[RMDB]
RNA sequence: GGGAACGACUCGAGUAGAGUCGAAAAGCUCUGGAAUUGAGGCCCCUCUAACAAUAAUCCAAAACUACUUCGCAGAGUAACCUGCCGAAUCGUAGGAUGCCCAUUACUAUCUAUUUUUGGAGCAUCUAAAACUGUCAGUGCUUCGGCACUGACAGAAUCAGAUGUUGAUGUUCGCAUCAACAUCUGAAAAAGAAACAACAACAACAAC
Reactivity to 2A3 in 0.01 (KOAc 150mM, MgCl2 10mM, bicine 150mM(pH8.5), 24C), signal-to-noise 2, nucleotides 027 to 156: g000c000u000c040u010g060g060a100a030u130u050g060a050g050g090c000c030c080c000u010c020u090a070a110c040a070a160u160a040a060u070c020c020a000a050a030a060c020u030a010c010u030u040c020g010c010a010g030a040g120u030a050a090c000c000u010g040c050c040g030a060a060u080c080g030u040a020g050g000a000u010g000c000c000c010a030u040u020a040c060u070a110u220c040u080a200u190u090u000u010u020g010g010a070g030c000a000u010c000u030a000a000a050a080c000u000g000u000c000a000g010u000g000c000u040u050c090g070g010c000a000c000u000g000a000c000a000g000a000a020
Reactivity to DMS in 0.01 (KOAc 150mM, MgCl2 10mM, bicine 150mM(pH8.5), 24C), signal-to-noise 1, nucleotides 027 to 156: g010c020u010c000u010g010g020a060a040u010u010g010a060g000g020c020c010c000c010u000c050u000a160a170c140a070a130u020a080a100u040c060c060a060a050a160a050c060u000a060c070u000u020c040g020c020a020g020a100g000u000a110a060c180c020u000g000c030c020g030a020a090u000c050g030u000a160g020g000a020u000g020c020c000c020a040u000u000a060c220u010a140u020c170u000a160u010u000u020u000u000g000g000a090g010c050a000u000c010u020a020a060a050a220c020u000g000u010c000a000g020u000g020c000u000u010c300g020g090c010a020c000u000g000a000c010a000g000a020a030